[RMDB]
RNA sequence: GGGAACGACUCGAGUAGAGUCGAAAACUUCAGUCGAGAAGCUCUCUCUCUGAGAGACUCUGAAGUCCUCUGAGAGAGAUCCUUCGAGAAGCUGACUGACUCUAGCUGAUCCUAGCUGAAGGACUUCUCAGGAUCGAGACUUCGAUCGAUCAGUCGAGAUACGGGCAUUAUUCGUAAUGCCCGUAUCAAAAGAAACAACAACAACAAC
Reactivity to DMS in 0.01 (KOAc 150mM, MgCl2 10mM, bicine 150mM(pH8.5), 24C), signal-to-noise 2, nucleotides 027 to 156: c000u000u000c000a050g020u010c040g000a300g030a070a070g020c140u010c000u000c000u000c020u000c030u000g000a020g010a160g010a010c010u010c080u010g020a080a240g020u030c020c010u000c000u000g000a070g020a030g000a060g000a010u010c040c010u000u000c010g030a300g010a050a030g000c030u000g000a130c020u010g010a240c010u000c030u010a040g020c060u000g020a230u010c260c020u000a030g030c020u000g020a050a050g020g010a120c060u000u000c030u000c050a210g040g030a040u000c010g020a060g010a180c160u000u010c010g040a070u010c020g000a090u000c010a050g030u000c020g000a250
Reactivity to 2A3 in 0.01 (KOAc 150mM, MgCl2 10mM, bicine 150mM(pH8.5), 24C), signal-to-noise 4, nucleotides 027 to 156: c000u020u000c010a010g010u000c000g020a010g000a050a010g010c000u000c000u000c010u000c010u000c020u020g000a040g020a020g000a030c020u090c150u300g250a270a030g000u000c010c000u000c010u030g010a030g000a000g000a010g000a000u030c000c000u000u000c000g030a030g000a010a000g020c040u050g000a020c010u010g000a010c000u000c000u020a020g050c070u050g070a090u100c010c010u010a020g000c010u000g010a010a010g030g040a040c050u050u010c010u020c020a060g180g020a010u010c010g020a030g120a290c140u220u070c040g010a020u020c010g020a050u070c010a020g010u060c030g060a030